[RMDB]
RNA sequence: GGGAACGACUCGAGUAGAGUCGAAAACUGGCAGAAGGCCAGCAAGUUGAAUUCACCAUUGAAAAUGGUGCGAAAGGCCCAGCAGCUGCUAACGUAACUGCAAUCUAAGCUUAAUUGCUUAACUGAUGUUCAGUUAUAUCUUCGGAUAUAACUGAACAAAAGAAACAACAACAACAAC
Reactivity to 2A3 in 0.01 (KOAc 150mM, MgCl2 10mM, bicine 150mM(pH8.5), 24C), signal-to-noise 4, nucleotides 027 to 126: c010u010g010g000c010a050g050a300a050g300g000c010c040a000g010c030a030a070g100u170u200g070a050a050u080u020c000a010c020c010a010u010u100g110a080a110a050a030u020g030g000u010g040c020g060a150a090a010g070g000c020c000c000a020g000c000a000g000c000u060g000c000u080a130a020c060g040u020a050a030c010u010g000c000a010a010u060c040u060a030a030g010c010u000u100a090a060u300u060g000c010u040u050a100a080c020u080g040a040u020
Reactivity to DMS in 0.01 (KOAc 150mM, MgCl2 10mM, bicine 150mM(pH8.5), 24C), signal-to-noise 3, nucleotides 027 to 126: c000u000g010g000c000a300g010a150a130g020g000c010c020a000g020c130a060a060g010u000u000g010a120a150u000u000c020a020c000c000a010u000u010g010a090a140a090a050u000g020g010u000g000c150g000a030a100a100g030g000c000c000c020a130g000c000a020g030c020u010g010c000u010a080a070c300g000u000a030a050c030u000g000c060a170a090u010c160u000a000a000g000c010u000u000a120a110u000u000g010c010u000u000a050a070c090u000g010a240u000

Chemical mapping of a 177-nucleotide RNA with 2A3 and DMS. 2A3 adducts were read by reverse transcription with SuperScript II with manganese. For DMS the reverse transcriptase was MarathonRT. It was measured as part of the RMDB library RFMREP. The 2A3 profile rests on 3,108 reads. The RNA was probed in 150 mM KOAc, 10 mM MgCl2 and 150 mM bicine (pH 8.5) at 24 C. The DMS profile rests on 2,008 reads.